[RMDB]
RNA sequence: GGGAACGACUCGAGUAGAGUCGAAAAUUCGACGCAUCGCUCUACCAGUCCGGACGGGCCGUCAGUGAUCGGUCGCGAUACUUGGUACCGUCGUCGCCACAGAGCCGGUGACGUUCGAGCGAUCGGGCCCUGGACCUAAUUUCGAUUAGGUCCAGGGAAAAGAAACAACAACAACAAC
Reactivity to DMS in 0.01 (KOAc 150mM, MgCl2 10mM, bicine 150mM(pH8.5), 24C), signal-to-noise 2, nucleotides 027 to 126: u000u000c080g000a130c030g020c120a030u000c000g010c010u000c010u000a060c100c230a150g010u010c130c090g010g020a090c020g010g000g000c010c020g000u000c140a110g010u010g010a040u000c010g030g000u010c230g030c020g000a050u000a030c030u000u030g020g010u030a060c090c030g040u000c020g000u000c060g000c020c050a130c240a130g000a110g030c090c020g030g030u000g000a040c020g000u000u000c180g010a020g000c020g000a010u000c060g030g000g010
Reactivity to 2A3 in 0.01 (KOAc 150mM, MgCl2 10mM, bicine 150mM(pH8.5), 24C), signal-to-noise 2, nucleotides 027 to 126: u060u020c050g010a010c010g000c050a000u000c000g000c020u000c000u000a010c000c000a000g020u000c040c000g020g020a020c000g030g000g010c010c000g050u090c070a020g110u060g260a090u050c000g020g130u200c150g020c000g300a000u030a040c010u040u120g000g030u160a300c010c000g030u030c050g130u110c010g020c000c030a240c050a090g140a040g080c070c060g000g040u020g000a020c010g060u040u080c050g020a000g000c010g000a000u020c030g020g050g010